[RMDB]
RNA sequence: GGGAACGACUCGAGUAGAGUCGAAAAGUGCGAGGUCUACCUAUCCUUUCGAUGGUUGAAGUCGAACAUGAGACCUGUAAGUUAGGACAGUUAUGAAGUUAUAGCUAGAACCAUCUACCUCGCUGAAGAUAUAGUGGCAAUUCGUUGUUACUAUAUCAAAAGAAACAACAACAACAAC
Reactivity to DMS in 0.01 (KOAc 150mM, MgCl2 10mM, bicine 150mM(pH8.5), 24C), signal-to-noise 9, nucleotides 027 to 126: g020u020g010c000g010a010g010g010u010c080u010a110c120c050u000a080u020c050c040u000u010u010c050g010a060u010g000g000u000u010g000a140a050g010u010c150g010a060a110c090a060u020g000a200g000a050c180c010u000g000u020a060a120g010u020u030a070g000g010a050c040a020g000u000u010a070u020g010a110a060g000u010u020a060u020a110g010c030u000a100g000a060a100c020c010a040u000c020u010a060c000c000u000c000g010c000u010g000a120a080
Reactivity to 2A3 in 0.01 (KOAc 150mM, MgCl2 10mM, bicine 150mM(pH8.5), 24C), signal-to-noise 9, nucleotides 027 to 126: g070u050g000c000g000a000g000g000u030c030u050a100c010c010u030a080u100c010c000u020u050u060c030g030a030u040g000g030u010u020g070a050a000g030u080c050g030a040a000c040a130u140g020a030g030a060c010c000u000g030u060a080a060g010u020u100a020g020g030a020c000a000g000u050u050a050u100g120a120a030g030u070u100a130u070a110g020c010u020a030g040a090a020c010c000a020u010c010u030a010c000c000u000c010g000c010u010g050a060a020